RNA sequence: GGGAACGACUCGAGUAGAGUCGAAAACAGCAAAAGGGAACCGAUUCCCACCAAGUUCGGAAAGAGAUACCGGGCGAGGCGCUGAAGAAAGAAUCUCGCUUCAGACACCCCAAGGACUCGACUGAAGAAUGCACGCCAUCGUUCGCGAUGGCGUGAACGAUACCUUGAGGUUCGCCUCAAGGUAUCGAAAAGAAACAACAACAACAAC
Reactivity to 2A3 in 0.01 (KOAc 150mM, MgCl2 10mM, bicine 150mM(pH8.5), 24C), signal-to-noise 2, nucleotides 027 to 156: c010a000g170c040a080a140a080a150g000g040g000a040a030c060c020g070a200u020u140c010c000c000a040c060c010a150a050g040u010u080c030g020g000a100a170a000g010a020g030a030u070a080c000c010g020g020g000c110g050a080g040g050c130g000c040u030g010a020a000g000a010a250a040g060a050a110u050c050u070c180g050c000u010u000c030a080g010a090c000a040c000c000c010c020a060a050g040g000a020c010u000c040g070a050c080u100g020a030a020g040a060a050u100g030c000a010c000g000c000c000a000u000c010g050u090u100c160g000c030g170a010u000g000g020c000g000u010g000a000a000

Chemical mapping of a 207-nucleotide RNA with 2A3. For 2A3, 619 sequencing reads were counted. 2A3 is a SHAPE reagent: it acylates the 2'-hydroxyl of flexible nucleotides of all four kinds. It was measured as part of the RMDB library M2RFPK.